[RMDB]
RNA sequence: GGGAACGACUCGAGUAGAGUCGAAAACUUCAGGCCACUGACUAGCGAUAACUUUCCCCACAACGGAACAACUCUCAUUGCAUGGGAUCAUUGGGUACUGUGGGUUUAGUGGUUGUAAAAACACCUGACAGAGCGGAUGAUUCGUCAUCCGCUCUGUAAAAGAAACAACAACAACAAC
Reactivity to DMS in 0.01 (KOAc 150mM, MgCl2 10mM, bicine 150mM(pH8.5), 24C), signal-to-noise 1, nucleotides 027 to 126: c100u000u050c030a100g000g000c070c000a040c080u040g000a070c110u020a130g030c070g010a040u000a060a120c060u010u000u000c120c000c000c100a030c020a060a060c110g030g030a090a120c020a020a050c180u000c000u000c010a000u010u030g000c120a300u000g000g000g000a000u040c180a210u000u010g000g020g000u020a120c000u020g010u000g010g000g000u000u000u010a020g010u000g000g030u000u000g000u000a080a020a100a130a060c200a060c010c020u000g010
An RNA of 177 nucleotides, treated with DMS and read out base by base.
The reactions ran in a buffer of 150 mM KOAc, 10 mM MgCl2 and 150 mM bicine (pH 8.5), at 24 C.
For DMS the reverse transcriptase was MarathonRT.